[RMDB]
RNA sequence: GGGAACGACUCGAGUAGAGUCGAAAAGUUAACGUGAAUACCAAGGAAGUUACUCAGGUAUUCAAAUAUUAUACUUUCAUGAUUUAGAAAGCUUCUAAAUUCAUGACAUUUCUCCUUAACCGAAGCUGUACUACAUUUAGUUCGCUAAAUGUAGUACAAAAGAAACAACAACAACAAC
Reactivity to DMS in 0.01 (KOAc 150mM, MgCl2 10mM, bicine 150mM(pH8.5), 24C), signal-to-noise 4, nucleotides 027 to 126: g000u000u000a070a110c300g010u000g000a020a000u000a000c000c000a250a220g010g000a140a180g010u010u000a070c090u010c080a180g010g000u000a010u000u000c000a010a050a050u000a100u000u020a070u000a030c010u000u000u000c000a010u000g010a030u000u000u000a010g000a010a150a200g010c220u000u000c010u000a000a030a020u000u010c010a010u000g010a080c300a090u000u000u000c030u010c040c300u000u010a070a120c180c090g010a060a070g030c130u010
Reactivity to 2A3 in 0.01 (KOAc 150mM, MgCl2 10mM, bicine 150mM(pH8.5), 24C), signal-to-noise 5, nucleotides 027 to 126: g010u020u020a050a010c070g030u020g030a000a000u010a010c010c010a040a010g100g010a130a210g200u250u140a120c040u050c090a050g000g020u000a000u000u010c000a010a010a000u050a010u060u060a050u030a030c010u040u020u040c010a000u000g020a010u010u010u010a010g010a040a170a060g070c080u050u000c000u010a020a040a030u150u120c010a000u000g020a010c010a060u020u050u010c050u030c020c020u120u170a080a050c050c040g080a060a010g020c060u020
The record gives the reactivity of an RNA of 177 nucleotides to DMS and 2A3.
For 2A3 the reverse transcriptase was SuperScript II with manganese.
Reactivities are rounded to 0.1 and cut off at 0 and 3.
DMS adducts were read by reverse transcription with MarathonRT.
Values cover nucleotides 27 to 126.
The RNA was probed in 150 mM KOAc, 10 mM MgCl2 and 150 mM bicine (pH 8.5) at 24 C.